[RMDB]
RNA sequence: GGGAACGACUCGAGUAGAGUCGAAAACAGACACCAGCUCCCGUGGCCGCCAUCUGACGCACCUGGCUCUCCUUUCGCGGAUGCGCGUCCAGCGAAUGCACAAUGUUGAGCGAUACGGGGUCCACGAAUUUAGUGGACUCUUCGGAGUCCACUAAAUAAAAGAAACAACAACAACAAC
Reactivity to 2A3 in 0.01 (KOAc 150mM, MgCl2 10mM, bicine 150mM(pH8.5), 24C), signal-to-noise 9, nucleotides 027 to 126: c040a010g120a020c040a030c030c030a020g010c030u030c030c020c020g010u040g050g030c040c010g000c010c010a050u030c040u050g030a050c060g000c020a030c020c010u010g050g000c020u020c020u040c010c020u050u140u120c050g010c050g030g040a090u130g070c080g020c040g080u040c020c010a020g010c010g070a070a060u120g020c050a030c030a090a140u150g010u070u070g050a060g030c020g010a010u030a080c030g000g000g000g040u020c010c010a070c050g070a060
Reactivity to DMS in 0.01 (KOAc 150mM, MgCl2 10mM, bicine 150mM(pH8.5), 24C), signal-to-noise 6, nucleotides 027 to 126: c100a120g010a120c080a100c050c040a090g000c060u020c050c020c010g010u010g000g000c050c020g010c020c010a040u020c050u020g020a110c090g030c080a060c050c030u010g000g010c040u000c040u010c030c000u020u020u000c050g020c050g010g000a040u020g000c120g030c090g030u000c030c030a090g030c040g010a070a040u010g010c110a090c150a080a080u030g010u010u000g000a130g010c050g000a100u030a080c100g000g000g000g000u010c010c040a040c080g020a100
Structure probing data (2A3 and DMS) for a 177-nucleotide construct. The RNA was probed in 150 mM KOAc, 10 mM MgCl2 and 150 mM bicine (pH 8.5) at 24 C. For 2A3, 12,346 sequencing reads were counted. For 2A3 the reverse transcriptase was SuperScript II with manganese.